[RMDB]
RNA sequence: GGGAACGACUCGAGUAGAGUCGAAAAGACAGGGGACAAACGCUGCACAGUUAACGUGUAAUUAACGUGUAAUUAACGUCUAACAUGUCCAGAAGUGUCGCUGGCACCUGGCAGCCCGCUGGGACAGCGGGUACUUCUGUUUCGACAGAAGUACCCGAAAAGAAACAACAACAACAAC
Reactivity to 2A3 in 0.01 (KOAc 150mM, MgCl2 10mM, bicine 150mM(pH8.5), 24C), signal-to-noise 9, nucleotides 027 to 126: g060a020c040a020g020g030g030g010a000c030a020a150a010c070g000c030u020g000c020a010c010a040g000u010u020a020a010c030g020u060g130u120a040a050u030u030a090a060c160g070u110g100u170a010a010u020u030a020a010c010g000u000c020u020a020a020c050a190u040g010u000c040c010a010g020a100a040g100u050g010u050c030g000c140u050g040g020c030a110c060c000u010g030g010c010a030g040c000c020c020g000c020u020g010g010g020a020c020a030g060
Reactivity to DMS in 0.01 (KOAc 150mM, MgCl2 10mM, bicine 150mM(pH8.5), 24C), signal-to-noise 9, nucleotides 027 to 126: g010a090c060a050g000g010g010g020a080c040a060a090a080c120g010c020u000g010c300a020c020a060g010u000u000a030a020c010g000u000g000u000a020a040u000u000a030a120c250g020u010g010u000a010a020u000u000a040a030c020g000u000c170u000a020a030c030a070u000g010u000c170c010a030g000a060a080g010u000g000u000c040g010c050u000g000g010c090a100c020c010u000g000g000c110a110g000c040c030c040g010c040u000g000g000g000a120c130a070g010